[RMDB]
RNA sequence: GGGAACGACUCGAGUAGAGUCGAAAAGAAAGAGCAGCACACAGCGACGAAGAUCCGGGCUGGAUUCUAGAGCACGGUCGCCCCAGCGCGGCCCGGGAAGUCAGUGGCAAGACUGCCUGAGCAGCAACAGAGUCGCCCAGGUUCGCCUGGGCGACAACAUAUUAUUGUACUUCGGUACAAUAAUAUGAAAAGAAACAACAACAACAAC
Reactivity to 2A3 in 0.01 (KOAc 150mM, MgCl2 10mM, bicine 150mM(pH8.5), 24C), signal-to-noise 2, nucleotides 027 to 156: g040a030a060a000g040a010g010c040a000g010c030a030c000a010c020a060g050c030g100a040c030g050a070a030g020a050u030c020c020g040g080g000c030u080g040g030a110u110u070c050u130a030g010a020g070c040a010c070g030g030u040c050g020c040c000c000c020a070g000c010g000c000g060g010c040c000c000g010g010g010a020a000g020u020c020a000g020u020g050g040c040a050a030g050a080c040u030g000c000c010u020g000a030g030c040a010g000c000a010a060c010a080g070a040g070u000c010g000c010c000c000a000g030g030u060u060c110g020c060c030u010g000g000g000c000g000a000c000a000a000
Reactivity to DMS in 0.01 (KOAc 150mM, MgCl2 10mM, bicine 150mM(pH8.5), 24C), signal-to-noise 2, nucleotides 027 to 156: g010a070a080a130g030a110g000c010a080g020c010a170c050a080c060a090g020c050g020a080c040g000a100a120g000a090u000c040c080g020g030g050c050u000g000g010a110u000u010c050u010a100g010a140g010c050a080c050g010g010u000c070g010c000c000c020c140a070g030c080g010c010g010g000c000c020c020g000g000g010a040a120g010u010c000a170g000u000g020g010c030a100a090g030a090c030u000g000c010c020u010g010a060g040c010a060g020c030a070a100c070a120g000a160g000u010c030g000c000c020c000a040g000g000u000u000c230g010c020c000u000g040g000g010c010g000a000c010a000a040